[RMDB]
RNA sequence: GGGAACGACUCGAGUAGAGUCGAAAAAAAUGAAAAACGUAAUUAACGACCCAAAGGUCAUCCAGGAAAUGUGCGUAGAUAUUAUGAGCGCAGGCGCUAUCCCGGAUGCAGGCAAUAUUCAGGCGUAUCUUAACAUCCGAAAAGACCUAUGGGAUGGAUUCACAACAGACUUCGGUCUGUUGUGAAUAAAAGAAACAACAACAACAAC
Reactivity to 2A3 in 0.01 (KOAc 150mM, MgCl2 10mM, bicine 150mM(pH8.5), 24C), signal-to-noise 1, nucleotides 027 to 156: a000a000a000u120g080a300a000a010a000a000c040g000u120a000a170u240u090a090a000c020g080a030c000c050c060a130a000a000g000g000u030c030a030u070c080c080a070g000g000a040a140a110u080g120u050g000c070g020u000a040g070a160u060a100u300u200a140u220g030a010g000c030g000c080a030g070g000c040g030c080u070a050u030c030c000c030g040g020a000u010g000c030a010g030g060c020a050a050u030a080u300u150c010a030g100g030c000g000u040a050u000c040u070u070a030a030c000a030u000c000c000g000a060a060a060a060g010a050c040c000u000a050u030g000g000g000a000u080g080g000